[RMDB]
An RNA of 177 nucleotides, treated with 2A3 and DMS and read out base by base.
RNA sequence: GGGAACGACUCGAGUAGAGUCGAAAAGAUAUGGAUGAUAUAUAAGGCUAUGAAGUGGCUCGGAAACGAGCCAUGGAGCCUGUAUGAUCAUCCUAAGUCAAAACCUGUGAGGUUCGCCUCACAGGAACAUAACAUUGGGGUUCGCCCCAAUGUUAUGAAAAGAAACAACAACAACAAC
Reactivity to 2A3 in 0.01 (KOAc 150mM, MgCl2 10mM, bicine 150mM(pH8.5), 24C), signal-to-noise 4, nucleotides 027 to 126: g020a020u050a030u160g000g000a000u010g000a000u030a000u020a010u070a300a300g010g000c070u110a300u300g000a040a000g020u010g000g010c000u000c000g000g020a030a040a040c000g000a000g030c130c010a000u010g000g000a000g000c010c000u000g000u000a030u060g070a020u020c000a000u010c000c000u010a070a000g030u010c020a020a030a130a270c000c000u000g020u010g000a000g060g100u090u240c300g190c080c010u010c010a000c000a000g010g010a000a010
Reactivity to DMS in 0.01 (KOAc 150mM, MgCl2 10mM, bicine 150mM(pH8.5), 24C), signal-to-noise 4, nucleotides 027 to 126: g000a040u000a300u010g000g010a020u000g010a020u000a030u010a030u020a110a040g020g020c000u000a260u010g000a200a230g010u000g000g010c000u000c000g010g000a080a060a160c010g010a020g010c000c000a000u000g000g010a000g030c000c010u000g010u000a020u000g000a010u010c000a000u000c010c000u000a030a070g000u000c030a150a100a120a130c000c000u000g010u000g010a020g000g000u000u020c300g030c010c000u000c000a020c000a000g010g000a050a110

The 2A3 profile rests on 6,254 reads. The data come from the RNA Mapping Database (RMDB), library TTRDES.